[RMDB]
RNA sequence: GGGAACGACUCGAGUAGAGUCGAAAAAGCGGUCUACGGACCGCAAACGCCAGACAAAACUGGUUUUCACAAUGAUCGUCCAGAUGGACCUGAAGUCUGAGAUCAUUGUGAAAGCUGAUUUUGUUAAGAUAAUCAGGACGUUCGCGUCCUGAUUAUCAAAAGAAACAACAACAACAAC
Reactivity to 2A3 in 0.01 (KOAc 150mM, MgCl2 10mM, bicine 150mM(pH8.5), 24C), signal-to-noise 5, nucleotides 027 to 126: a000g000c000g000g010u000c010u010a060c250g140g010a000c000c000g000c000a010a000a000c000g020c000c010a020g000a030c000a000a010a000a010c030u060g020g000u000u000u000u000c000a000c000a010a000u000g000a000u000c010g080u060c160c000a010g010a030u050g100g130a200c040c080u240g060a090a020g010u000c000u000g010a010g000a030u010c000a000u000u000g000u000g000a000a000a000g000c000u010g040a060u000u020u010u010g020u010u050a090a050
Reactivity to DMS in 0.01 (KOAc 150mM, MgCl2 10mM, bicine 150mM(pH8.5), 24C), signal-to-noise 2, nucleotides 027 to 126: a070g020c020g000g010u000c000u020a170c200g000g000a000c000c000g020c020a000a020a020c090g010c020c030a110g010a020c010a000a010a000a020c040u010g010g010u010u000u000u000c000a020c000a030a000u000g000a000u010c000g020u040c190c070a000g000a010u010g000g000a150c250c270u000g020a140a100g000u000c010u000g040a080g000a000u000c000a000u010u000g000u000g000a010a000a000g000c000u010g010a080u000u000u000u000g000u000u000a130a170